RNA sequence: GGGAACGACUCGAGUAGAGUCGAAAAGUGCCAGAGAUGUUGUAUAUUGGGCUACCAUCCAGUGAUGCAAUGGAGGCUUAUUAGGGUUGUCAGUUUUCCACAGGGUAGCAAUUAAAACUGUCUGAAAAAAACGAAACCACCUUCGGGUGGUUUCGAACAUUAUUUAGGCGUUCGCGCCUAAAUAAUGAAAAGAAACAACAACAACAAC
Reactivity to DMS in 0.01 (KOAc 150mM, MgCl2 10mM, bicine 150mM(pH8.5), 24C), signal-to-noise 2, nucleotides 027 to 156: g050u020g020c040c030a230g010a140g020a120u000g010u000u010g000u000a030u010a120u000u010g020g020g000c050u010a120c050c030a150u010c020c010a090g030u010g010a150u000g040c060a090a040u010g010g030a230g040g010c030u010u000a090u000u010a100g000g010g030u000u000g030u020c000a040g000u000u000u010u000c010c010a130c090a200g010g000g040u010a040g030c020a120a140u000u000a050a040a080a010c010u000g020u010c000u010g000a010a000a050a080a060a110a140c000g000a020a040a030c000c000a010c000c000u000u010c300g060g000g040u000g000g000u000u000u000c000g010a040a060
Reactivity to 2A3 in 0.01 (KOAc 150mM, MgCl2 10mM, bicine 150mM(pH8.5), 24C), signal-to-noise 2, nucleotides 027 to 156: g100u050g030c010c010a050g020a000g010a300u040g020u070u020g020u030a040u020a050u110u110g030g010g000c010u020a020c010c010a030u110c000c010a030g040u050g150a060u020g000c020a020a030u020g030g000a020g050g010c030u120u090a130u100u190a180g100g050g000u000u000g000u020c000a000g000u020u030u180u130c020c010a090c000a050g000g030g040u020a010g020c040a030a030u160u160a030a000a000a000c000u000g000u010c010u000g000a020a040a010a000a000a000a000c000g000a000a000a000c000c000a000c010c000u050u030c120g100g000g020u010g000g000u000u000u000c000g000a000a000
Notes: This 207-nucleotide RNA was probed chemically with DMS and 2A3. Values cover nucleotides 27 to 156. The reactions ran in a buffer of 150 mM KOAc, 10 mM MgCl2 and 150 mM bicine (pH 8.5), at 24 C.